Source information:
The record gives the reactivity of an RNA of 177 nucleotides to DMS and 2A3. Conditions: 150 mM KOAc, 10 mM MgCl2 and 150 mM bicine (pH 8.5), 24 C. Source: RMDB library OK2TST, as collected in RNAgym.
[RMDB]
RNA sequence: GGGAACGACUCGAGUAGAGUCGAAAACUUAGCGUCGUUUUUAAAAAGCUUGUGAAAUCCGCUCGCUAUUGCUUGGAGUUUGUAAAUUUAGGGGGUUUGUUAAGACAAGGGGAGUAUUUAGGCAAGGCUAUAAAUCCUUUUUCGAAAGGAUUUAUAGAAAAGAAACAACAACAACAAC
Reactivity to DMS in 0.01 (KOAc 150mM, MgCl2 10mM, bicine 150mM(pH8.5), 24C), signal-to-noise 4, nucleotides 027 to 126: c040u000u000a060g020c060g010u000c030g000u000u000u000u020u010a030a100a140a140a120g000c080u010u010g000u010g000a070a120a070u010c110c060g030c070u000c050g010c030u000a070u000u000g010c060u000u010g010g010a100g010u020u020u010g000u010a050a050a100u000u010u010a070g010g010g010g000g020u000u010u010g010u000u000a060a090g000a060c060a060a070g000g010g010g000a100g010u000a060u000u000u000a070g000g010c070a070a080g000g020
Reactivity to 2A3 in 0.01 (KOAc 150mM, MgCl2 10mM, bicine 150mM(pH8.5), 24C), signal-to-noise 1, nucleotides 027 to 126: c000u060u050a040g020c000g000u000c000g050u040u000u020u050u130a100a150a000a050a050g000c040u100u080g050u050g130a080a090a180u020c040c050g030c000u000c000g000c000u020a030u110u120g070c020u050u050g010g010a070g080u160u140u160g070u130a210a150a090u190u230u300a040g000g050g020g000g010u000u090u080g060u020u100a060a030g030a010c080a040a000g000g000g010g000a020g050u010a060u040u120u030a000g040g010c040a050a020g070g000